[RMDB]
RNA sequence: GGGAACGACUCGAGUAGAGUCGAAAAGAUAUGGAGACCCUUCUUUUGACGCUGGGCAGGGUCGGAAACGACCCGAUGCAGCGAUAAGAAGCUCCUAAGUCAAAACAGUCCGGUUCGCCGGACUGAAGUCCUAGAUAAAGUUCGCUUUAUCUAGGACAAAAGAAACAACAACAACAAC
Reactivity to DMS in 0.01 (KOAc 150mM, MgCl2 10mM, bicine 150mM(pH8.5), 24C), signal-to-noise 5, nucleotides 027 to 126: g010a050u000a280u010g010g000a030g010a210c140c220c030u000u000c000u000u010u000u010g000a210c070g000c000u000g000g010g010c150a300g000g000g020u000c010g000g000a070a070a190c000g000a010c000c000c000g000a080u010g000c010a020g010c000g010a090u000a060a020g010a030a010g010c030u000c000c000u010a060a170g020u000c070a070a110a150a200c010a010g000u000c000c000g010g000u000u010c250g010c000c010g000g000a000c000u000g000a030a090
Reactivity to 2A3 in 0.01 (KOAc 150mM, MgCl2 10mM, bicine 150mM(pH8.5), 24C), signal-to-noise 4, nucleotides 027 to 126: g020a030u110a060u190g000g010a030g030a060c100c070c000u020u010c010u090u120u060u150g180a100c040g000c000u020g020g290g120c110a050g010g010g010u000c000g000g000a030a060a000c010g010a010c000c020c000g010a020u060g040c010a000g000c000g010a000u010a000a000g000a000a000g010c010u000c000c010u050a240a020g070u060c030a020a010a150a240c000a020g000u000c000c010g040g010u030u050c300g010c060c000g000g010a000c000u000g000a020a020